[RMDB]
RNA sequence: GGGAACGACUCGAGUAGAGUCGAAAAGUUCCUGACGGGAACGUUCGUAUAGUACGAGAGGAACUACGAAUGGGUGCCACUGGUGUACCGGCUGUUCGAAAGAGCACGUGCCGGGCAGCCACGCACCGUUUCAUCAUGGCUUCGGCCAUGAUGAAACAAAAGAAACAACAACAACAAC
Reactivity to 2A3 in 0.01 (KOAc 150mM, MgCl2 10mM, bicine 150mM(pH8.5), 24C), signal-to-noise 2, nucleotides 027 to 126: g000u020u000c000c010u010g040a050c040g020g060g030a070a020c010g000u000u010c000g010u010a000u020a060g010u000a000c000g010a000g000a040g110g010a050a010c000u010a000c000g000a010a010u050g000g000g040u010g040c000c010a120c010u010g000g020u020g100u180a150c010c030g000g030c010u040g030u000u020c000g040a060a050a030g010a010g000c000a040c270g200u130g020c020c030g000g000g000c030a010g030c000c000a000c040g000c000a000c030c000
Reactivity to DMS in 0.01 (KOAc 150mM, MgCl2 10mM, bicine 150mM(pH8.5), 24C), signal-to-noise 2, nucleotides 027 to 126: g010u020u000c000c000u000g020a110c130g040g000g010a050a140c000g030u000u020c020g000u000a000u000a020g020u000a090c000g020a280g000a200g020g000a100a110c140u000a000c010g000a000a010u000g040g000g000u000g010c000c010a060c120u000g000g020u000g010u010a300c030c000g000g000c000u010g000u000u020c000g000a100a080a150g000a000g000c000a030c300g020u060g010c010c000g130g000g020c240a240g000c000c010a040c090g000c000a010c000c010
Background: The data come from the RNA Mapping Database (RMDB), libraries RFM100 and RFMREP. This 177-nucleotide RNA was probed chemically with 2A3 and DMS. For 2A3 the reverse transcriptase was SuperScript II with manganese. The RNA was probed in 150 mM KOAc, 10 mM MgCl2 and 150 mM bicine (pH 8.5) at 24 C.